[RMDB]
RNA sequence: GGGAACGACUCGAGUAGAGUCGAAAAUAAAAAUCCCAGCUGCCAUACCCACCAUCGACAGGAGUAUGAACGUGGCCACUGACACAACUACUACAGUCAUAGAGGGAUACAGCUCAUAACACAAAAAGAUAUAUAUAAUCUUCGGAUUAUAUAUAUCAAAAGAAACAACAACAACAAC
Reactivity to DMS in 0.01 (KOAc 150mM, MgCl2 10mM, bicine 150mM(pH8.5), 24C), signal-to-noise 1, nucleotides 027 to 126: u080a050a080a130a110a130u010c010c000c030a110g000c030u000g010c030c060a110u000a060c030c030c040a140c000c000a010u010c190g000a060c070a060g050g010a110g010u010a060u000g030a040a160c180g000u000g000g020c010c090a040c090u000g030a060c060a020c060a060a120c070u000a010c000u000a060c030a090g030u000c030a010u000a000g010a110g030g000g000a100u000a110c040a010g000c040u000c010a150u060a040a140c020a060c030a080a030a070a150a100
Reactivity to 2A3 in 0.01 (KOAc 150mM, MgCl2 10mM, bicine 150mM(pH8.5), 24C), signal-to-noise 1, nucleotides 027 to 126: u120a000a080a000a000a020u040c000c010c000a020g000c040u050g050c000c070a100u130a200c020c000c050a050c030c000a030u080c040g050a050c050a030g060g040a000g040u050a040u130g050a080a000c070g040u050g000g060c120c100a110c170u180g010a010c010a000c000a130a060c000u080a010c000u050a100c010a010g000u020c000a070u020a080g060a040g030g010g020a010u050a030c000a000g020c020u020c050a180u200a150a020c000a000c040a000a010a180a050a100
The record gives the reactivity of an RNA of 177 nucleotides to DMS and 2A3. For 2A3, 884 sequencing reads were counted. The data come from the RNA Mapping Database (RMDB), library M2PK90. For DMS the reverse transcriptase was MarathonRT. Conditions: 150 mM KOAc, 10 mM MgCl2 and 150 mM bicine (pH 8.5), 24 C. Values cover nucleotides 27 to 126.